[RMDB]
RNA sequence: GGGAACGACUCGAGUAGAGUCGAAAAUGUAUGAAGCCUUGAAAGAGAUGGUAAGUAGUGGACCAGAAUAAUGAAAUUAUUUUCUGACUUCAGGGACUCUACCAGAUUUCACCAAGACAGAAUGCCACCCAGAAUCGGGACUUGUGGUAUUGACUGACACCGAAAGGAUAUUCGUAUCCUUUCGGUGAAAAGAAACAACAACAACAAC
Reactivity to 2A3 in 0.01 (KOAc 150mM, MgCl2 10mM, bicine 150mM(pH8.5), 24C), signal-to-noise 3, nucleotides 027 to 156: u110g010u030a060u090g050a050a020g010c000c000u030u020g090a080a060a010g050a030g010a040u090g040g020u050a040a070g000u030a030g050u090g040g060a040c010c000a010g030a030a060u140a120a020u070g050a070a010a040u290u140a150u030u140u050u000c020u040g050a060c010u010u010c040a020g010g020g050a020c000u010c010u000a020c010c020a020g010a130u030u090u030c090a090c100c000a020a000g030a030c000a010g010a030a000u000g000c000c000a010c020c020c000a060g140a160a090u250c130g020g000g040a070c080u120u170g020u020g030g020u010a040u030u020g040a040c030u020g000a010
Reactivity to DMS in 0.01 (KOAc 150mM, MgCl2 10mM, bicine 150mM(pH8.5), 24C), signal-to-noise 2, nucleotides 027 to 156: u010g050u000a120u000g030a220a180g030c000c020u000u000g000a080a070a210g050a100g000a120u000g000g000u000a040a090g010u010a080g030u000g000g020a130c040c020a060g010a060a070u000a070a070u000g010a100a100a270u010u000a160u020u000u010u000c010u000g010a130c190u000u010c010a030g010g030g010a060c020u010c010u000a050c000c030a070g000a220u010u000u010c010a130c080c010a020a010g020a050c040a110g000a300a080u010g020c000c060a030c010c020c010a160g000a030a100u000c070g040g040g000a050c210u000u000g000u000g010g030u000a090u010u020g000a180c060u010g000a300